[RMDB]
RNA sequence: GGGAACGACUCGAGUAGAGUCGAAAAGGGUUUUAUGAAGAUUGCAGAAUACAGGCAAUUCACUAUGAACGAUUGUUAAUUUUGUUGGUGCAUCCUUGCUCUGUCUAUAUAGGUGGCUUGCCACUUGCUGACCAGGUAUGUUCGCAUACCUGGUCAGAAAAGAAACAACAACAACAAC
Reactivity to DMS in 0.01 (KOAc 150mM, MgCl2 10mM, bicine 150mM(pH8.5), 24C), signal-to-noise 1, nucleotides 027 to 126: g020g000g010u010u000u000u010a110u000g020a100a110g010a070u000u000g010c020a060g020a070a130u000a070c180a050g020g010c060a010a060u000u010c020a060c130u020a080u000g030a070a080c060g020a120u000u010g010u000u020a100a100u010u000u000u000g010u000u020g020g030u000g010c160a090u000c030c040u020u000g010c040u000c060u000g000u000c040u000a070u010a100u010a090g010g020u000g010g010c040u010u010g040c030c010a040c050u000u010g020

This 177-nucleotide RNA was probed chemically with DMS. The data come from the RNA Mapping Database (RMDB), library RFMREP. The RNA was probed in 150 mM KOAc, 10 mM MgCl2 and 150 mM bicine (pH 8.5) at 24 C.